This 177-nucleotide RNA was probed chemically with DMS and 2A3.
For DMS the reverse transcriptase was MarathonRT.
Conditions: 150 mM KOAc, 10 mM MgCl2 and 150 mM bicine (pH 8.5), 24 C.
2A3 adducts were read by reverse transcription with SuperScript II with manganese.
For DMS, 1,126 sequencing reads were counted.

[RMDB]
RNA sequence: GGGAACGACUCGAGUAGAGUCGAAAAGGAAGAGAGCGCGUAACACGGCCGGCAGUCAAAGUGAAAGAAAAACCUUCCAGCUGCCGCGGGAACCUGCCGCGUCGGCAAUAAAGGUAAGCGUUGCGUUCCUUCAAUGGGGAUUCGUCCCCAUUGAAGGAAAAGAAACAACAACAACAAC
Reactivity to DMS in 0.01 (KOAc 150mM, MgCl2 10mM, bicine 150mM(pH8.5), 24C), signal-to-noise 1, nucleotides 027 to 126: g000g000a080a080g000a210g030a030g000c000g000c000g000u000a110a030c200a040c020g010g020c000c030g000g000c010a030g020u010c170a120a150a020g000u000g000a000a170a170g000a040a010a090a130a060c040c040u000u000c180c050a100g050c020u030g000c060c010g110c020g000g020g000a070a160c050c010u000g000c000c000g020c030g000u020c090g000g000c050a170a000u010a120a080a010g030g000u000a100a040g000c050g000u000u000g070c020g000u000u000
Reactivity to 2A3 in 0.01 (KOAc 150mM, MgCl2 10mM, bicine 150mM(pH8.5), 24C), signal-to-noise 2, nucleotides 027 to 126: g060g040a030a070g050a000g000a030g110c050g000c030g070u060a050a070c000a060c120g040g000c040c010g000g000c000a020g000u070c060a040a040a070g090u180g150a210a080a030g080a060a120a010a040a020c010c000u050u060c090c010a030g000c000u000g010c020c010g020c000g000g000g000a060a100c030c030u090g030c000c000g000c040g000u040c020g010g000c010a060a000u150a090a080a000g040g000u070a050a000g080c030g040u000u000g010c000g030u020u000